[RMDB]
RNA sequence: GGGAACGACUCGAGUAGAGUCGAAAAGAUAUGGAGUUGACGACAUGCUUUAAGGGUCGGAAACGACCUGAAGAGCAACAGCGUCACCUCCUAAGUCAAAAGGAUAAUCCGUUCGCGGAUUAUCCAACUUUACAGCUAUCUUCGGAUAGCUGUAAAGAAAAGAAACAACAACAACAAC
Reactivity to 2A3 in 0.01 (KOAc 150mM, MgCl2 10mM, bicine 150mM(pH8.5), 24C), signal-to-noise 3, nucleotides 027 to 126: g020a010u020a020u060g000g010a000g010u010u020g000a000c010g020a020c120a270u300g000c000u040u000u020a030a030g020g000g010u010c000g000g000a030a010a000c010g000a000c000c030u040g000a070a050g000a010g020c050a160a010c080a060g010c000g000u000c010a000c000c000u000c000c010u000a040a010g010u010c010a000a020a090a250g010g000a000u000a000a000u000c020c010g020u050u100c300g010c020g070g020a000u000u000a000u000c000c010a000a000
Reactivity to DMS in 0.01 (KOAc 150mM, MgCl2 10mM, bicine 150mM(pH8.5), 24C), signal-to-noise 4, nucleotides 027 to 126: g010a010u000a240u000g000g000a030g010u000u000g000a010c000g000a030c080a300u000g010c010u000u000u010a140a300g000g000g000u000c000g000g010a040a040a140c000g020a010c000c000u000g000a120a100g000a000g030c000a040a040c260a090g000c010g000u000c010a000c030c000u000c000c000u000a000a080g010u000c020a080a090a130a140g000g000a010u010a010a010u000c000c000g030u010u010c230g020c010g000g010a010u000u000a000u000c000c000a020a020

This 177-nucleotide RNA was probed chemically with 2A3 and DMS. DMS adducts were read by reverse transcription with MarathonRT.